RNA sequence: GGGAACGACUCGAGUAGAGUCGAAAAUUGCCGAAUGUCUCCAGGCCGAAACUGAAUGGUCAGUCCUGGACGUGGCCAUAAUUAUUGUUAUGUUAAUGGCGACCAUCGGCAGGGGAAACUAAGAGCAGCUUUCGGGGUUGAUUGGGCCUCCUCUGGAUCACCUCAUACCUUUCGAGGUAUGAGGUGAAAAAGAAACAACAACAACAAC
Reactivity to 2A3 in 0.01 (KOAc 150mM, MgCl2 10mM, bicine 150mM(pH8.5), 24C), signal-to-noise 2, nucleotides 027 to 156: u050u070g020c000c010g030a110a090u070g000u000c000u000c000c010a050g060g000c000c070g070a040a090a070c070u210g080a080a110u270g050g000u000c020a010g020u080c000c070u100g060g050a000c050g070u090g050g030c010c010a020u060a080a070u150u190a070u140u230g070u080u070a040u130g040u030u100a230a120u010g000g000c000g020a000c000c030a050u010c000g000g000c000a010g000g000g000g000a020a130a000c120u090a130a000g020a010g060c020a000g010c020u050u160u170c050g090g000g000g020u060u140g040a130u030u100g000g040g060c000c050u060c030c000u050c020u010g020g010a040
Chemical mapping of a 207-nucleotide RNA with 2A3. The data come from the RNA Mapping Database (RMDB), library OK3TST. Values are in units of 0.01, from 0 to 300, in steps of 10.